[RMDB]
This 207-nucleotide RNA was probed chemically with 2A3 and DMS. For DMS the reverse transcriptase was MarathonRT. The reactions ran in a buffer of 150 mM KOAc, 10 mM MgCl2 and 150 mM bicine (pH 8.5), at 24 C.

RNA sequence: GGGAACGACUCGAGUAGAGUCGAAAAGCUGCUGUAACAAAAAUCCUCUAGACUGUGUGGCUCAAACAACAGAAGUGUUUCUCAGCCCUCUGGAGGCUGGAAAGUCCUUUAUGGUCUGCAGACAGCAGCCUUUGUGCCAUGUGCUCGCAUUGGGGGAUCAAAAUUUAAUAUUCGUAUUAAAUUUUGAAAAAGAAACAACAACAACAAC
Reactivity to 2A3 in 0.01 (KOAc 150mM, MgCl2 10mM, bicine 150mM(pH8.5), 24C), signal-to-noise 2, nucleotides 027 to 156: g000c000u010g000c010u010g030u100a070a050c080a050a090a080a050a080u080c010c000u030c020u020a050g040a090c110u040g010u040g060u100g160g000c000u030c050a040a120a080c010a010a040c000a050g130a150a100g160u040g040u070u060u010c120u010c020a000g000c000c000c000u080c060u080g050g040a050g000g010c010u020g000g010a050a050a010g080u080c020c000u170u190u180a120u230g000g010u020c030u030g050c010a030g010a090c000a000g000c000a000g010c000c000u070u080u050g040u020g040c000c000a020u030g000u080g050c060u040c090g030c040a040u170u210g030g000g040g010g050a020
Reactivity to DMS in 0.01 (KOAc 150mM, MgCl2 10mM, bicine 150mM(pH8.5), 24C), signal-to-noise 1, nucleotides 027 to 156: g010c010u010g050c010u000g010u020a120a260c010a000a100a090a180a090u010c020c000u000c040u000a120g030a080c100u010g000u000g020u000g040g010c020u000c040a050a060a060c040a070a220c050a160g000a060a190g010u000g000u000u010u010c030u000c060a060g000c010c000c040u000c080u000g010g000a040g000g020c070u010g010g000a040a010a060g010u000c040c020u000u000u000a090u040g050g020u000c030u030g000c070a090g010a090c000a040g000c000a030g020c010c000u000u000u000g030u020g000c020c020a100u000g030u000g000c050u000c070g010c040a100u000u000g010g000g010g010g020a300